This 207-nucleotide RNA was probed chemically with 2A3 and DMS. Source: RMDB library OK3TST, as collected in RNAgym. 2A3 adducts were read by reverse transcription with SuperScript II with manganese. For DMS the reverse transcriptase was MarathonRT.
RNA sequence: GGGAACGACUCGAGUAGAGUCGAAAACGCCGAGUCCCACUGGAAGGCAUGACGCCAAAGGAAAUGGUUGCGGAGUACGGUCCCAGCCUGCUGGAUGGCGGUAAGACGUUCUCUAGCGCAUACGGCAGUGAGCAGGAAUUGUGGGAACGACAGAAUACAGGCCAACUAUAUUCGUAUAGUUGGCCUGAAAAGAAACAACAACAACAAC
Reactivity to 2A3 in 0.01 (KOAc 150mM, MgCl2 10mM, bicine 150mM(pH8.5), 24C), signal-to-noise 2, nucleotides 027 to 156: c110g020c020c000g070a000g080u030c000c000c000a010c090u100g010g090a080a090g050g000c030a050u110g130a090c080g010c000c030a090a050a010g120g040a120a170a000u190g050g030u090u100g020c040g020g000a030g010u110a080c080g030g020u010c000c000c000a000g000c000c030u020g040c000u070g100g060a080u100g070g000c000g000g000u020a080a000g050a040c000g020u190u060c070u000c040u130a070g030c020g000c020a040u070a160c050g100g050c020a090g020u090g080a000g020c020a000g000g070a130a110u240u100g000u010g020g070g030a000a000c000g070a000c000a030g100a100a070u170a030
Reactivity to DMS in 0.01 (KOAc 150mM, MgCl2 10mM, bicine 150mM(pH8.5), 24C), signal-to-noise 2, nucleotides 027 to 156: c040g040c030c020g010a170g020u000c000c030c020a150c090u000g000g010a160a020g020g050c020a130u010g000a130c110g020c000c010a070a130a130g000g000a090a130a160u000g000g040u000u000g010c040g000g010a090g050u020a060c070g040g000u010c000c000c000a110g020c010c010u000g020c000u000g060g030a160u000g000g020c000g030g040u000a120a210g020a280c040g010u000u010c060u000c100u000a130g020c000g040c000a160u000a090c040g030g000c000a090g040u020g030a040g010c040a100g030g010a040a130u000u000g010u000g030g000g000a070a020c040g010a070c030a160g000a060a060u010a290